[RMDB]
RNA sequence: GGGAACGACUCGAGUAGAGUCGAAAAGGAGGCGUUUCGACGCCUCCACGAGCGGGUAUAUAACUCAGUGGAUUAGAGUUUAUGGCUACGAACCAUAAAGUCGGGGGUUCGAAUCCCUCUAUACUCACCAGAAAGACCGCUGAUUCGUCAGCGGUAAGUCUCAAGAUCGAUUCGUCGAUCUUGAGACAAAAGAAACAACAACAACAAC
Reactivity to 2A3 in 0.01 (KOAc 150mM, MgCl2 10mM, bicine 150mM(pH8.5), 24C), signal-to-noise 2, nucleotides 027 to 156: g010g000a010g000g010c020g000u040u080u080c180g110a020c000g010c020c000u000c000c010a000c010g060a030g060c090g010g050g000u030a040u030a030u010a070a090c030u020c070a040g020u080g150g170a300u080u220a060g000a000g000u000u020u000a000u000g020g000c040u120a060c190g060a130a070c010c000a010u010a000a040a010g020u010c000g000g000g010g000g030u000u000c000g000a000a000u000c000c000c000u000c000u000a000u000a010c010u020c020a030c010c010a040g150a040a080a020g090a010c020c000g010c010u010g010a030u000u080c190g050u020c040a000g000c000g100g000u110a120a010